This 170-nucleotide RNA was probed chemically with DMS and 2A3. For 2A3 the reverse transcriptase was SuperScript II with manganese. For 2A3, 6,946 sequencing reads were counted. The reactions ran in a buffer of 150 mM KOAc, 10 mM MgCl2 and 150 mM bicine (pH 8.5), at 24 C. It was measured as part of the RMDB library 15KLIB.

RNA sequence: GGGAACGACUCGAGUAGAGUCGAAAAGUCCCCUUCCGAACGAGGGGGACGGUCCUUGGACCUCAGGGGGCCCAUGGAGCCGUGGGAAUCCCCAGACCUCCCUUCUCCACACUCCUUCCCCCCUGCGUGAGAUCACCCUUCGGGGUGAUCAAAAGAAACAACAACAACAAC
Reactivity to DMS in 0.01 (KOAc 150mM, MgCl2 10mM, bicine 150mM(pH8.5), 24C), signal-to-noise 4, nucleotides 027 to 129: g000u000c010c010c010c000u000u000c020c100g070a210a300c080g020a020g010g000g040g040g000a020c020g020g020u040c030c010u040u010g040g000a120c070c040u010c070a070g000g000g000g000g000c170c110c060a090u040g000g000a000g000c060c060g030u030g000g000g000a090a060u070c010c000c000c000a080g000a160c110c020u020c000c010c010u000u030c080u020c000c010a050c040a170c050u000c080c060u000u030c020c030c020c000c000c020u020g010c130g020u000g070a060
Reactivity to 2A3 in 0.01 (KOAc 150mM, MgCl2 10mM, bicine 150mM(pH8.5), 24C), signal-to-noise 4, nucleotides 027 to 129: g020u000c000c000c000c000u000u000c030c070g200a140a100c070g000a030g000g010g000g000g010a000c010g000g000u010c010c000u020u100g060g020a060c000c000u040c050a020g000g020g000g000g010c020c040c000a030u110g020g040a060g130c100c060g050u030g010g000g030a050a080u130c010c000c010c000a020g060a020c000c000u030c000c000c000u010u020c060u020c000c010a050c000a000c030u030c010c000u050u100c010c000c000c000c020c010u030g000c050g040u050g040a060